The record gives the reactivity of an RNA of 207 nucleotides to 2A3. For 2A3, 1,194 sequencing reads were counted. 2A3 adducts were read by reverse transcription with SuperScript II with manganese. Reactivities are given for positions 27 through 156. The reactions ran in a buffer of 150 mM KOAc, 10 mM MgCl2 and 150 mM bicine (pH 8.5), at 24 C. The data come from the RNA Mapping Database (RMDB), library ARCHII.
[RMDB]
RNA sequence: GGGAACGACUCGAGUAGAGUCGAAAAGAACUCGCUCUCGCUGCCUAAUUAAACGGCAGCGCGUCCCCGGUAGGUUUGCGGGUGGCCUACCGGAGGGCGUCAGAGACACCCGCUCGGGCUACUCGGUCGCACGGGGCUGAGUAGCUGACACCUAACCCAAUGGUGACAUGUUCGCAUGUCACCAUUGAAAAGAAACAACAACAACAAC
Reactivity to 2A3 in 0.01 (KOAc 150mM, MgCl2 10mM, bicine 150mM(pH8.5), 24C), signal-to-noise 1, nucleotides 027 to 156: g100a020a020c020u020c040g030c050u100c050u090c120g000c000u010g000c000c000u170a300a290u300u300a110a120a040c020g000g020c000a000g000c010g000c000g000u000c000c000c000c000g000g000u010a000g000g000u000u010u150g000c010g000g010g000u000g000g010c000c000u000a000c000c010g010g000a060g000g010g020c000g060u040c040a030g000a010g010a030c000a000c010c000c000g020c000u000c000g000g000g000c000u000a000c000u020c020g000g000u010c020g040c040a080c120g190g000g000g010c020u000g000a010g010u010a000g000c010u010g000a000c050a000c000c000u060a100a090c000c050